[RMDB]
RNA sequence: GGGAACGACUCGAGUAGAGUCGAAAACAAAGGCUGCCAGAAGCCAAUAUAGUGGAUUUGUGAGAACACUAUUCCAACAGAUGCGUGAUGUUUUGGGGACAUUUGAUACUGUCCAAAUAAUCAAGCUGCUACCAUUUGCAGCAGCCCCACCGGAGCCCUUAUUGUGGUCUUUCGAGACCACAAUAAGAAAAGAAACAACAACAACAAC
Reactivity to 2A3 in 0.01 (KOAc 150mM, MgCl2 10mM, bicine 150mM(pH8.5), 24C), signal-to-noise 1, nucleotides 027 to 156: c020a010a100a030g040g000c040u040g080c110c030a000g070a130a010g020c080c060a000a000u180a020u060a040g040u030g060g030a160u000u040u210g100u100g070a080g030a070a000c020a000c110u010a010u040u090c040c010a050a040c040a200g100a100u060g050c030g000u030g090a030u070g010u070u180u090u070g010g010g000g020a020c020a020u070u050u100g050a070u110a170c080u150g010u000c020c000a060a060a000u150a000a070u080c040a010a010g000c000u080g030c000u070a080c040c070a080u110u100u070g000c020a020g000c000a010g070c000c060c000c020a020c000c050g160g020a070g070c070c090